[RMDB]
RNA sequence: GGGAACGACUCGAGUAGAGUCGAAAACAAUAUGCAUGGAUCCCAUGUACAAUUUUCAUGCGUAUUAGUAUGCUCGUGCAUGGGAGUGCACUCAGGAGCCUGAGUGUACAAUGCUAGACGAGCGUAAGGUAGACGUAGAAUUCGUUCUACGUCUACCAAAAGAAACAACAACAACAAC
Reactivity to DMS in 0.01 (KOAc 150mM, MgCl2 10mM, bicine 150mM(pH8.5), 24C), signal-to-noise 4, nucleotides 027 to 126: c070a050a020u010a010u020g000c000a010u000g010g020a040u020c030c020c030a080u030g020u030a110c260a050a030u010u020u000u010c010a000u000g000c010g030u000a010u000u000a090g020u000a010u010g000c000u010c010g020u000g000c020a030u000g010g010g010a180g000u010g000c010a000c000u000c000a010g020g010a230g010c260c000u000g000a000g010u010g000u000a010c000a080a050u020g010c090u030a070g010a060c020g010a020g000c000g030u020a040a070
Reactivity to 2A3 in 0.01 (KOAc 150mM, MgCl2 10mM, bicine 150mM(pH8.5), 24C), signal-to-noise 9, nucleotides 027 to 126: c020a010a020u020a010u050g000c000a000u000g010g040a060u080c020c030c030a020u080g060u080a090c110a180a180u040u050u040u090c010a000u020g000c000g020u020a040u040u030a080g150u040a040u110g000c000u000c010g010u010g040c020a020u010g010g040g040a040g000u000g000c000a000c000u000c000a030g090g070a110g140c030c010u000g000a000g000u000g000u000a000c000a020a060u060g030c030u070a040g020a130c000g010a000g010c010g010u020a050a020